[RMDB]
RNA sequence: GGGAACGACUCGAGUAGAGUCGAAAAGAGCGAGCGAUAAAUUUCAUCAACAGCAACGUACCCUCGCAGAUGCGCGUUCACGCCAGCGCGCCGGCAGACGCUGCAGUCGCGGCGAUCGCGUCGCCGAGCGGGCAUACAGAUUCGUCUGUAUGCCCGCAAAAGAAACAACAACAACAAC
Reactivity to 2A3 in 0.01 (KOAc 150mM, MgCl2 10mM, bicine 150mM(pH8.5), 24C), signal-to-noise 2, nucleotides 027 to 126: g090a010g000c010g000a000g040c060g020a030u110a080a170a070u140u240u200c050a120u060c040a060a090c030a080g040c000a030a060c060g080u080a070c000c000c020u010c040g000c000a030g020a140u100g000c000g030c020g020u040u060c100a060c150g010c020c030a000g040c020g000c020g030c020c000g030g000c050a070g000a090c020g000c040u080g020c000a070g140u200c050g010c020g020g050c000g040a070u020c030g030c020g130u040c010g000c000c000g040a000
Reactivity to DMS in 0.01 (KOAc 150mM, MgCl2 10mM, bicine 150mM(pH8.5), 24C), signal-to-noise 2, nucleotides 027 to 126: g010a100g000c030g000a050g010c090g010a060u000a040a110a130u010u000u000c050a140u000c090a060a110c060a060g010c060a040a040c070g000u000a100c030c040c000u000c050g000c080a100g000a110u000g020c050g000c030g000u000u000c060a080c150g020c090c080a120g010c010g000c030g030c010c080g000g000c050a110g000a030c020g010c020u000g000c040a080g000u010c170g010c040g000g020c020g010a040u000c050g010c020g030u000c020g030c030c030g000a130